Structure probing data (2A3 and DMS) for a 207-nucleotide construct. The DMS profile rests on 1,909 reads. The RNA was probed in 150 mM KOAc, 10 mM MgCl2 and 150 mM bicine (pH 8.5) at 24 C. For DMS the reverse transcriptase was MarathonRT. Source: RMDB library OK3TST, as collected in RNAgym.
RNA sequence: GGGAACGACUCGAGUAGAGUCGAAAAAACUUCAUUCGGGAUCGGGAGGACGCUAGUGGCCUGAGCUUCAGGAAGGCGGAUCUUGAAAAGAAUCGUCCGGAUGGGAUGGCUCAUAUCAAGCAGGCUUUUGAAUUUCUCGAGACGACGCUACUGGCCGCUCCACAUAGUAAUUCGUUACUAUGUGGAGAAAAGAAACAACAACAACAAC
Reactivity to 2A3 in 0.01 (KOAc 150mM, MgCl2 10mM, bicine 150mM(pH8.5), 24C), signal-to-noise 3, nucleotides 027 to 156: a000a000c050u100u040c040a070u070u060c070g080g000g050a090u040c020g000g000g000a030g040g000a020c060g000c060u040a040g040u040g060g010c010c010u010g030a050g040c020u090u070c040a040g070g020a040a010g030g000c010g030g030a070u030c010u020u040g080a080a100a040a050g020a010a040u050c020g040u000c040c000g010g060a080u130g090g000g010a020u070g030g000c020u020c030a090u100a050u140c030a080a000g040c060a030g130g030c000u080u070u090u140g050a090a110u050u160u020c030u030c010g070a070g030a040c050g030a060c030g020c050u080a030c010u060g040g000c020c000g000
Reactivity to DMS in 0.01 (KOAc 150mM, MgCl2 10mM, bicine 150mM(pH8.5), 24C), signal-to-noise 1, nucleotides 027 to 156: a030a000c040u000u000c020a070u000u030c000g000g030g010a090u000c050g000g020g000a060g000g000a110c080g040c020u000a080g000u010g030g020c020c010u030g010a200g030c050u000u020c030a070g010g020a070a100g020g000c080g020g020a110u000c020u020u000g000a100a030a180a280g010a030a070u000c010g020u010c010c030g010g000a290u010g080g010g050a050u020g000g000c060u020c000a100u010a260u030c090a040a100g020c060a300g010g020c020u010u010u010u000g010a070a130u000u000u000c020u000c030g020a140g040a100c000g000a060c080g010c030u000a060c020u000g020g060c000c020g040